[RMDB]
Source information
The data come from the RNA Mapping Database (RMDB), library VIROID. This 207-nucleotide RNA was probed chemically with 2A3. 2A3 adducts were read by reverse transcription with SuperScript II with manganese. Values cover nucleotides 27 to 156.
RNA sequence: GGGAACGACUCGAGUAGAGUCGAAAACCAGCGAGAGGCGUGGAGAGAGGGCCAGCGGUGCUCUGGAAUACAGGCUCUGCUUUGGACCACAAUCUUUCGUCCCUUCUUCUUUACCUUCUACUGGCUCUUCCGAUGAGACGCGACCGGUGGCAUCACCCUACAUGCUGUCCUUCGGGACAGCAUGUAGAAAAGAAACAACAACAACAAC
Reactivity to 2A3 in 0.01 (KOAc 150mM, MgCl2 10mM, bicine 150mM(pH8.5), 24C), signal-to-noise 2, nucleotides 027 to 156: c010c010a010g000c140g050a030g010a020g050g050c100g010u080g000g010a000g000a000g020a050g020g000g010c010c020a010g000c000g000g060u020g010c040u010c010u300g070g100a200a040u270a300c020a020g000g030c000u020c010u040g010c000u190u090u180g040g000a110c030c050a100c060a030a080u040c040u030u200u090c060g060u080c000c020c000u090u180c000u140u020c020u070u070u030a060c020c020u040u120c010u050a050c000u050g030g000c010u030c000u110u000c080c010g040a100u130g020a020g000a030c050g050c020g070a070c040c020g050g030u010g010g020c040a040u100c040a120c030c020